Background: Structure probing data (2A3 and DMS) for a 177-nucleotide construct. 2A3 adducts were read by reverse transcription with SuperScript II with manganese. Reactivities are given for positions 27 through 126. It was measured as part of the RMDB library TTRDEL.
RNA sequence: GGGAACGACUCGAGUAGAGUCGAAAAGAUAUGGAACGCAUACGGGAGUGGGUCGGAAACGACCUUACAUCGAUCGUAGCGUUCCUAAGUCAAAACAGCGUUAGUGCGUUCGCGCACUAACGCUGAACUAACUAGGGGGGUUCGCCCCCCUAGUUAGAAAAGAAACAACAACAACAAC
Reactivity to 2A3 in 0.01 (KOAc 150mM, MgCl2 10mM, bicine 150mM(pH8.5), 24C), signal-to-noise 1, nucleotides 027 to 126: g000a030u130a030u080g000g010a000a000c030g020c060a170u020a050c010g010g080g040a000g000u040g000g000g030u010c010g000g000a090a070a010c000g010a000c040c000u000u070a030c040a290u230c030g190a090u080c000g010u000a000g000c000g000u020u000c000c000u010a010a000g010u000c020a000a040a130a190c000a000g050c000g000u050u020a000g000u010g050c000g090u090u110c250g040c010g000c260a010c010u000a000a000c020g000c000u000g000a000a000
Reactivity to DMS in 0.01 (KOAc 150mM, MgCl2 10mM, bicine 150mM(pH8.5), 24C), signal-to-noise 2, nucleotides 027 to 126: g000a000u000a300u000g000g010a000a000c010g010c010a070u000a010c000g050g000g010a070g020u000g000g010g020u000c010g010g010a090a110a120c010g000a010c000c000u000u010a020c040a170u010c140g030a160u020c030g020u000a010g020c000g000u000u000c000c000u000a000a060g010u010c030a060a040a130a240c020a000g010c000g030u010u000a000g040u000g020c010g030u000u010c280g010c010g000c000a020c000u000a010a000c000g010c000u000g000a010a060